[RMDB]
RNA sequence: GGGAACGACUCGAGUAGAGUCGAAAAGUCAGUCAACUAGCCCUGCGCUCCCGACCUAGUGACUGACAGAAAAGAGCUGCUCGGUCAGAACAAAUCUGACCUCGGGAGCGCAGGAGAGCAGCUCAAACCAUUAGCCCUAGUUCGCUAGGGCUAAUGGAAAAGAAACAACAACAACAAC
Reactivity to 2A3 in 0.01 (KOAc 150mM, MgCl2 10mM, bicine 150mM(pH8.5), 24C), signal-to-noise 2, nucleotides 027 to 126: g010u010c000a000g010u020c000a040a060c140u090a110g050c020c000c000u000g000c000g000c000u030c000c020c020g160a160c020c090u060a020g070u030g070a000c000u000g000a000c000a020g060a000a100a010a010g000a000g000c020u020g000c000u030c090g030g000u000c000a000g020a060a070c120a070a110a070u030c020u020g020a030c000c040u030c020g000g000g000a000g000c000g000c000a000g000g010a010g000a000g000c000a000g000c000u000c000a040a040a030
Reactivity to DMS in 0.01 (KOAc 150mM, MgCl2 10mM, bicine 150mM(pH8.5), 24C), signal-to-noise 2, nucleotides 027 to 126: g000u000c000a020g030u010c010a020a130c120u010a060g010c190c050c000u000g010c000g000c000u000c000c000c000g000a070c120c050u020a070g030u010g020a000c000u000g020a000c020a110g000a080a050a190a160g000a010g000c000u000g000c030u000c000g000g000u000c010a020g000a030a100c300a070a100a090u050c070u030g020a060c040c050u010c060g020g000g000a000g030c000g020c010a000g000g000a040g000a040g030c000a010g000c000u000c000a110a100a180